[RMDB]
About this RNA:
The record gives the reactivity of an RNA of 207 nucleotides to DMS and 2A3. The 2A3 profile rests on 3,835 reads. The data come from the RNA Mapping Database (RMDB), library RNAMAK. As a SHAPE reagent, 2A3 marks flexible, mostly unpaired nucleotides at the ribose 2'-OH.
RNA sequence: GGGAACGACUCGAGUAGAGUCGAAAAGGGGUCGACGCGCAAUGAGGCUAAGACAUGAGCUGAAGCCUCCACGGCUCAACAGCUUAGCUACCCACCAUUAUGCGUCGACGGAGGCACCCAAAACGAAGGAGCUUUGAGUUCGCUCAAAGCUCCUUCGCGAUCUAUUGUACUUCGGUACAAUAGAUCGAAAAGAAACAACAACAACAAC
Reactivity to DMS in 0.01 (KOAc 150mM, MgCl2 10mM, bicine 150mM(pH8.5), 24C), signal-to-noise 1, nucleotides 027 to 156: g000g000g020g040u010c000g000a000c000g010c010g000c020a070a050u000g020a300g020g000c020u000a030a040g020a110c010a300u020g000a020g030c000u000g010a020a090g000c020c000u000c020c100a300c060g020g110c010u000c000a120a090c030a170g010c010u010u000a030g020c000u000a080c000c010c000a300c040c010a070u000u000a060u000g000c000g030u000c000g000a060c030g060g000a010g060g050c000a070c000c000c000a020a090a110a190c050g000a060a020g010g000a060g040c000u010u010u000g000a030g010u000u010c270g000c000u000c000a000a020a000g020c000u000c020c000u000u000c000g020
Reactivity to 2A3 in 0.01 (KOAc 150mM, MgCl2 10mM, bicine 150mM(pH8.5), 24C), signal-to-noise 2, nucleotides 027 to 156: g070g000g040g010u010c010g000a000c000g000c000g010c050a010a020u030g010a050g030g010c010u010a000a010g040a060c130a210u230g000a000g000c000u020g030a120a020g020c000c000u000c020c010a020c020g010g000c000u010c010a030a090c100a030g160c020u010u010a000g000c010u050a100c090c090c030a040c030c010a010u010u020a020u050g010c000g010u000c000g000a000c030g000g000a000g000g000c000a030c000c000c000a020a090a020a030c020g010a000a000g010g010a000g010c000u040u000u000g020a020g020u070u150c200g060c110u000c010a010a010a010g010c000u010c000c010u000u000c000g000